[RMDB]
Notes
The data come from the RNA Mapping Database (RMDB), library OK2TRN. An RNA of 177 nucleotides, treated with DMS and 2A3 and read out base by base.

RNA sequence: GGGAACGACUCGAGUAGAGUCGAAAAUUCCACCUAAGUUGGGAGCCUUUUUCCAAGGUGGUUGCCAGUUAAUCAUGAGGUAGACCUUGUUUAACAAUUGCAAUUUUCUAACCUCUGGCAGGCUAUAUACUAUGCGUUUAUUCGUAAACGCAUAGUAAAAAGAAACAACAACAACAAC
Reactivity to DMS in 0.01 (KOAc 150mM, MgCl2 10mM, bicine 150mM(pH8.5), 24C), signal-to-noise 6, nucleotides 027 to 126: u000u000c010c010a050c020c040u010a100a120g020u010u010g020g020g000a050g010c120c100u000u000u010u000u000c020c030a110a060g010g020u010g010g010u000u000g000c000c050a110g010u010u000a080a100u010c090a080u010g010a020g020g010u000a030g000a040c300c300u000u000g000u010u000u010a080a110c220a120a090u010u000g000c030a020a010u000u000u000u000c030u000a040a050c000c010u000c020u000g000g010c130a050g000g000c020u000a070u010a120
Reactivity to 2A3 in 0.01 (KOAc 150mM, MgCl2 10mM, bicine 150mM(pH8.5), 24C), signal-to-noise 3, nucleotides 027 to 126: u020u000c000c000a020c010c000u140a170a110g130u230u050g010g000g060a040g040c030c050u140u290u040u060u010c030c010a050a040g040g000u020g000g050u000u050g000c000c000a020g010u090u200a130a100u100c080a080u250g000a000g070g000u010a010g000a020c000c010u000u040g060u050u160u070a140a100c080a120a100u110u060g020c020a030a030u020u020u110u140c020u050a210a260c000c000u040c040u000g000g000c010a010g000g050c020u010a020u020a000